[RMDB]
RNA sequence: GGGAACGACUCGAGUAGAGUCGAAAAGAAUCAUCGUACCUAUUUAGGUUUACGCUCCAAGAUCGGUGGAUAGCAGCCCUAUCAAUAUCUAGGAGAACUGUGCUAUGUUUAGAAGAUUAGGUAGUCUAUUACACAGCCAUGUUCGCAUGGCUGUGAAUCACAUUCUUCACUUCGGUGAAGAAUGUGAAAAAGAAACAACAACAACAAC
Reactivity to 2A3 in 0.01 (KOAc 150mM, MgCl2 10mM, bicine 150mM(pH8.5), 24C), signal-to-noise 2, nucleotides 027 to 156: g060a010a140u160c070a010u060c010g060u030a100c000c000u060a190u300u280u300a020g010g020u000u130u040a020c050g020c000u030c010c000a030a020g000a120u050c110g100g190u080g050g040a040u010a040g010c020a010g020c020c000c000u000a010u070c010a060a000u080a020u100c010u010a010g000g000a000g010a030a060c030u120g010u020g080c010u000a000u060g070u100u060u020a130g040a160a030g010a130u080u020a010g030g070u010a040g050u000c070u080a130u020u140a090c020a000c000a000g020c000c000a000u000g060u040u080c080g020c050a000u000g000g000c000u010g000u030g000a000a000
Reactivity to DMS in 0.01 (KOAc 150mM, MgCl2 10mM, bicine 150mM(pH8.5), 24C), signal-to-noise 1, nucleotides 027 to 156: g000a100a110u010c040a060u040c010g020u000a040c030c000u010a190u020u000u000a060g030g000u010u010u010a070c070g020c000u000c020c010a080a110g010a040u000c050g010g040u000g000g010a000u030a060g000c050a110g030c090c020c050u000a130u010c030a110a160u010a080u000c050u000a220g010g010a110g000a030a060c000u000g030u000g000c030u000a030u000g010u000u000u000a200g010a170a080g010a100u000u000a130g000g020u010a070g000u000c080u010a110u000u010a280c000a000c000a000g000c020c010a010u000g010u010u000c290g000c000a050u000g010g000c010u000g010u000g000a030a100
Chemical mapping of a 207-nucleotide RNA with 2A3 and DMS. Reactivities are given for positions 27 through 156. The RNA was probed in 150 mM KOAc, 10 mM MgCl2 and 150 mM bicine (pH 8.5) at 24 C. The data come from the RNA Mapping Database (RMDB), library M2RFPK. Values are in units of 0.01, from 0 to 300, in steps of 10.